RNA sequence: GGGAACGACUCGAGUAGAGUCGAAAAGCGACAUUCGUGUCGCGGGUUUCCUAAGUCGGUCCCUAAGACAGCCGAAGGGAGAAUCGUGGUCGGAAACGACCAAUUCUUUGAUCUUCGGUCGAGGGACCGAUAUGGAGUGUACGUAGUUCGCUACGAACGAGGUAAAACUAUUCGUAGUUUUACCUCGAAAAGAAACAACAACAACAAC
Reactivity to DMS in 0.01 (KOAc 150mM, MgCl2 10mM, bicine 150mM(pH8.5), 24C), signal-to-noise 2, nucleotides 027 to 156: g030c000g020a030c010a070u010u000c300g000u000g020u010c000g010c020g010g000g010u000u000u000c000c010u000a090a220g000u000c010g040g010u000c000c010c000u010a280a110g010a120c300a070g000c010c000g000a030a010g010g000g000a040g010a000a000u000c010g000u010g000g020u000c000g000g010a110a130a210c020g000a020c000c000a000a020u000u000c000u000u010u000g010a160u010c020u000u000c000g010g010u020c050g000a030g010g010g010a010c020c010g000a000u000a020u010g010g000a110g030u000g000u000a100c010g030u010a040g010u010u020c180g020c020u010a030c030g000a050a300
Reactivity to 2A3 in 0.01 (KOAc 150mM, MgCl2 10mM, bicine 150mM(pH8.5), 24C), signal-to-noise 3, nucleotides 027 to 156: g000c010g000a000c010a020u110u190c290g060u100g010u000c000g030c000g010g020g000u050u070u010c010c000u020a170a000g040u010c020g010g000u010c000c000c010u040a150a060g090a080c040a010g060c000c000g000a000a010g030g010g010a020g000a020a000u070c210g150u100g020g000u000c020g000g050a100a060a100c010g000a010c000c010a010a000u020u000c010u200u220u080g090a170u030c000u000u000c000g040g000u030c010g010a010g000g000g000a000c000c000g010a000u010a010u030g050g030a120g060u170g030u080a060c050g010u000a000g010u060u110c230g000c160u040a000c060g060a060a030
Structure probing data (DMS and 2A3) for a 207-nucleotide construct. It was measured as part of the RMDB library RNAMAK. For DMS, 5,992 sequencing reads were counted. For DMS the reverse transcriptase was MarathonRT. Values cover nucleotides 27 to 156. 2A3 adducts were read by reverse transcription with SuperScript II with manganese.